[RMDB]
An RNA of 177 nucleotides, treated with DMS and 2A3 and read out base by base. It was measured as part of the RMDB library RFM100. For 2A3 the reverse transcriptase was SuperScript II with manganese.
RNA sequence: GGGAACGACUCGAGUAGAGUCGAAAAGACACACCCUUCGCGCGUCCUGGGGCGUGCCAGUCGAUGACGAGGAAAAUCGUAUCGAUUGAAAUCUGCGUCCCGGGGCCGAUUGGGAGGAUACCGGAGAGAACUGGACAGAGUUCGCUCUGUCCAGUUCAAAAGAAACAACAACAACAAC
Reactivity to DMS in 0.01 (KOAc 150mM, MgCl2 10mM, bicine 150mM(pH8.5), 24C), signal-to-noise 1, nucleotides 027 to 126: g000a190c300a080c260a060c040c000c000u000u000c170g020c020g020c180g020u000c020c030u000g000g040g000g000c000g000u000g000c250c000a000g000u000c000g000a000u030g000a010c010g000a000g000g070a210a080a080a100u000c000g000u000a070u020c000g000a020u000u050g000a060a060a020u020c240u000g000c020g000u010c000c000c000g020g020g050g000c000c000g000a080u020u000g000g000g000a090g000g020a190u010a110c010c000g000g000a050g010a250
Reactivity to 2A3 in 0.01 (KOAc 150mM, MgCl2 10mM, bicine 150mM(pH8.5), 24C), signal-to-noise 3, nucleotides 027 to 126: g090a000c040a000c010a010c080c010c000u020u030c080g030c000g000c030g080u040c000c000u010g010g000g010g000c010g000u030g080c030c020a000g000u000c000g020a000u130g230a100c000g020a030g070g270a100a090a010a160u020c010g000u000a000u000c000g000a000u000u010g020a040a050a050u140c110u200g000c010g000u000c000c000c000g000g000g000g000c020c000g030a050u010u120g080g000g000a000g030g000a040u060a140c050c080g000g000a060g010a020
Annotation
The reactions ran in a buffer of 150 mM KOAc, 10 mM MgCl2 and 150 mM bicine (pH 8.5), at 24 C. The 2A3 profile rests on 1,931 reads.